Chemical mapping of a 177-nucleotide RNA with DMS and 2A3. It was measured as part of the RMDB library OK2TRN. High DMS reactivity at an A or C suggests that its Watson-Crick edge is free. For DMS the reverse transcriptase was MarathonRT.
RNA sequence: GGGAACGACUCGAGUAGAGUCGAAAAGGAUCCUCUCACAGGAUUGUCUCUGUGUUCCGAAACUCCAACAUUAUUGCUUCGGGACACCUACAGCAAUAAUGUAGGUAUAGAGAGUAGGAGAGGAUCGGCCUGGACGUAAUUUCGAUUACGUCCAGGCAAAAGAAACAACAACAACAAC
Reactivity to DMS in 0.01 (KOAc 150mM, MgCl2 10mM, bicine 150mM(pH8.5), 24C), signal-to-noise 2, nucleotides 027 to 126: g000g000a010u000c000c000u000c010u000c000a080c100a150g000g010a170u000u010g020u000c020u000c000u010g010u000g010u000u010c010c000g010a010a040a050c030u020c220c210a090a170c300a090u030u020a110u010u000g030c030u000u000c030g000g000g000a030c090a050c000c000u000a010c040a010g020c070a070a060u020a080a070u000g010u000a000g030g010u000a100u000a010g010a020g010a080g030u000a170g030g030a020g000a000g020g010a000u010c000g000
Reactivity to 2A3 in 0.01 (KOAc 150mM, MgCl2 10mM, bicine 150mM(pH8.5), 24C), signal-to-noise 2, nucleotides 027 to 126: g020g000a000u000c030c000u000c000u000c000a150c080a100g130g080a210u070u160g120u000c000u000c000u020g050u000g010u060u040c000c000g000a040a030a020c070u150c140c050a060a030c010a120u120u230a060u260u300g020c020u000u020c000g010g000g010a030c000a010c020c000u000a010c000a010g060c050a070a280u110a160a030u140g000u000a000g000g040u020a030u150a040g030a000g020a020g050u080a050g000g070a000g000a000g000g000a000u000c010g010